[RMDB]
About this RNA:
Source: RMDB library OK2TST, as collected in RNAgym. Chemical mapping of a 177-nucleotide RNA with DMS and 2A3.

RNA sequence: GGGAACGACUCGAGUAGAGUCGAAAAAAUGCCUGCUUUGUUUGAUAACAAAGGUAAUGCAUAAAAAGCUCUAAAACUUAAGCUAUUACCAUCGAUUAAUACUAAUUUAUUCACAAUUUUAACCUCCCAAUGUGUAAUGAUUCGUCAUUACACAUUGAAAAGAAACAACAACAACAAC
Reactivity to DMS in 0.01 (KOAc 150mM, MgCl2 10mM, bicine 150mM(pH8.5), 24C), signal-to-noise 5, nucleotides 027 to 126: a100a050u000g000c000c080u000g020c050u000u000u000g010u010u000u010g010a170u000a060a040c030a020a030a030g000g000u000a070a070u000g010c030a030u010a040a080a100a130a060g000c030u000c070u010a070a060a120a140c060u000u000a070a110g010c020u000a030u010u000a070c030c010a090u000c070g000a090u000u000a030a070u000a080c080u000a030a070u010u000u000a050u030u000c040a100c100a040a070u010u010u010u010a070a150c070c030u000c060c040
Reactivity to 2A3 in 0.01 (KOAc 150mM, MgCl2 10mM, bicine 150mM(pH8.5), 24C), signal-to-noise 6, nucleotides 027 to 126: a000a010u080g020c020c020u050g040c040u070u030u010g070u040u020u180g260a200u190a140a000c010a000a030a000g020g000u050a050a050u090g000c010a000u130a060a170a020a040a020g010c000u010c070u190a150a150a120a130c040u100u070a070a020g000c020u030a040u050u100a050c000c020a050u080c050g050a040u070u130a110a050u080a090c050u070a100a180u120u080u130a100u150u150c050a020c020a120a090u070u120u160u220a130a090c010c000u000c020c020
As a SHAPE reagent, 2A3 marks flexible, mostly unpaired nucleotides at the ribose 2'-OH. The DMS profile rests on 5,290 reads.